[RMDB]
RNA sequence: GGGAACGACUCGAGUAGAGUCGAAAAUCACAAAGCGGAUUUAGCUCGGUUGGGAGAGGUCCAGACCGAAGAUCUGGUUGUCCUGUGAUCGAUGCACAGAAUUCGCACCAUAAACAACGGGAGAUUCGGUCAUGACCUAUUUCGAUAGGUCAUGACCAAAAGAAACAACAACAACAAC
Reactivity to DMS in 0.01 (KOAc 150mM, MgCl2 10mM, bicine 150mM(pH8.5), 24C), signal-to-noise 2, nucleotides 027 to 126: u000c020a010c260a120a010a050g030c160g000g010a050u000u040u000a170g020c090u000c020g000g000u010u000g000g000g000a020g000a010g000g010u040c000c050a090g000a000c000c040g020a100a050g020a300u000c000u020g000g000u050u000g020u010c000c060u030g020u020g020a060u000c080g010a020u020g000c030a030c180a110g010a050a050u010u010c000g010c000a090c060c100a090u010a140a100a110c190a080a150c070g000g020g010a070g000a090u000u000c230
Reactivity to 2A3 in 0.01 (KOAc 150mM, MgCl2 10mM, bicine 150mM(pH8.5), 24C), signal-to-noise 3, nucleotides 027 to 126: u140c030a000c080a070a070a000g030c030g000g040a000u010u010u010a040g000c020u020c000g000g050u000u070g050g030g000a060g020a010g010g050u050c000c000a000g030a010c010c040g160a070a070g060a080u010c010u000g020g000u050u000g070u060c000c000u040g090u150g030a020u000c020g020a020u300g000c050a080c000a070g090a010a030u000u020c000g000c010a040c020c010a070u200a050a130a020c100a070a050c000g040g080g020a070g040a100u100u070c070
Chemical mapping of a 177-nucleotide RNA with DMS and 2A3. For 2A3, 2,147 sequencing reads were counted. The DMS profile rests on 2,140 reads. The reactions ran in a buffer of 150 mM KOAc, 10 mM MgCl2 and 150 mM bicine (pH 8.5), at 24 C. For DMS the reverse transcriptase was MarathonRT.